Chemical mapping of a 177-nucleotide RNA with DMS and 2A3. The RNA was probed in 150 mM KOAc, 10 mM MgCl2 and 150 mM bicine (pH 8.5) at 24 C. High 2A3 reactivity points to a flexible backbone, as in loops and unpaired stretches. DMS adducts were read by reverse transcription with MarathonRT.

RNA sequence: GGGAACGACUCGAGUAGAGUCGAAAAGACAUCGACAAACUUGGACUGCUGCUUGCAAAUGAUGCGGGUAAUUCGUAAUCUGUCUUCGUGGGUCAGUAGGUUGAGAUAGUUGUGCGCCAGCUCGUUAAGAGUAUAGAUGGUUCGCCAUCUAUACUCUAAAAGAAACAACAACAACAAC
Reactivity to DMS in 0.01 (KOAc 150mM, MgCl2 10mM, bicine 150mM(pH8.5), 24C), signal-to-noise 8, nucleotides 027 to 126: g000a100c090a040u010c040g010a060c070a050a110a120c060u000u000g010g010a070c050u010g010c030u000g000c060u010u000g010c060a060a100a080u010g000a050u010g000c030g000g010g000u010a050a110u020u010c050g010u010a060a060u010c030u000g010u010c080u010u010c110g030u000g000g000g010u010c030a040g020u010a030g020g010u000u010g010a050g000a070u010a090g000u000u010g010u000g010c050g010c020c020a060g000c040u000c050g010u010u020a090
Reactivity to 2A3 in 0.01 (KOAc 150mM, MgCl2 10mM, bicine 150mM(pH8.5), 24C), signal-to-noise 7, nucleotides 027 to 126: g040a010c030a060u060c040g020a020c050a020a210a030c030u030u060g010g060a030c010u010g020c010u030g000c010u050u060g000c020a030a040a240u180g040a030u070g030c000g000g050g030u140a140a150u110u060c020g000u020a040a100u020c020u020g100u040c010u070u040c060g030u050g010g010g050u060c020a010g020u040a040g060g070u020u070g030a060g010a060u130a090g050u040u080g030u030g020c020g020c040c010a020g020c010u010c030g030u020u080a050
For 2A3 the reverse transcriptase was SuperScript II with manganese.